[RMDB]
RNA sequence: GGGAACGACUCGAGUAGAGUCGAAAAGAAGUCCGACGAGAUCGCGGCUGGGGCUUAGGACCCCACUCCUGCGAGACAGGAGUAAUCCUAAACAGGGUUUUCACCCUUCCUUUAGUUUCCUUCCUCUAUGAAAGAAUAUGUUCGCAUAUUCUUUCAUAAAAGAAACAACAACAACAAC
Reactivity to 2A3 in 0.01 (KOAc 150mM, MgCl2 10mM, bicine 150mM(pH8.5), 24C), signal-to-noise 5, nucleotides 027 to 126: g040a040a010g040u000c020c000g010a080c030g100a150g060a220u160c040g010c050g030g000c010u020g020g000g000g000c010u020u030a030g040g050a120c010c000c000c000a000c000u000c000c000u010g030c060g220a180g030a100c000a000g000g000a000g010u010a000a020u010c000c000u010a010a020a020c180a030g030g020g020u070u100u240u300c110a070c010c010c000u010u070c040c000u060u090u130a050g020u000u070u040c010c000u040u050c000c010u030c020u010
Reactivity to DMS in 0.01 (KOAc 150mM, MgCl2 10mM, bicine 150mM(pH8.5), 24C), signal-to-noise 5, nucleotides 027 to 126: g000a120a080g010u010c000c000g000a090c050g020a210g010a140u010c040g020c080g010g010c110u000g010g010g010g020c090u000u000a020g000g000a090c010c010c020c020a020c010u000c000c000u000g010c000g010a140g010a200c010a020g000g000a020g010u000a080a060u000c030c010u010a010a020a140c220a050g000g010g010u000u000u000u020c180a080c010c010c000u000u010c030c010u000u000u000a110g000u010u000u000c010c020u000u000c030c030u000c120u020
This 177-nucleotide RNA was probed chemically with 2A3 and DMS.
Reactivities are given for positions 27 through 126.
Conditions: 150 mM KOAc, 10 mM MgCl2 and 150 mM bicine (pH 8.5), 24 C.